This 177-nucleotide RNA was probed chemically with 2A3. The RNA was probed in 150 mM KOAc, 10 mM MgCl2 and 150 mM bicine (pH 8.5) at 24 C. 2A3 adducts were read by reverse transcription with SuperScript II with manganese. The data come from the RNA Mapping Database (RMDB), library RFM100.
[RMDB]
RNA sequence: GGGAACGACUCGAGUAGAGUCGAAAAGUGGAGGGCUUUUAUUUUUUCCCAAAAGAAAGCAAGUAAUGUUAGAGCAAUAAUUCUAGUAUCCGAAUUAGUCUUAUCCCUUGGCUCGCUCUAACGUUAUGGCGUGCAUAAUGUUCGCAUUAUGCACGCCAAAAGAAACAACAACAACAAC
Reactivity to 2A3 in 0.01 (KOAc 150mM, MgCl2 10mM, bicine 150mM(pH8.5), 24C), signal-to-noise 2, nucleotides 027 to 126: g090u150g030g050a040g020g000g000c020u000u000u000u000a300u090u160u080u040u000u010c040c010c000a060a000a040a000g000a000a040a000g030c020a040a030g040u150a190a000u070g000u000u000a000g000a000g010c030a050a060u040a050a000u100u000c000u020a030g030u040a080u090c050c050g110a110a010u000u000a050g010u000c000u020u050a060u030c000c000c020u000u040g050g000c000u030c090g000c000u000c020u000a000a010c010g000u000u020a010u070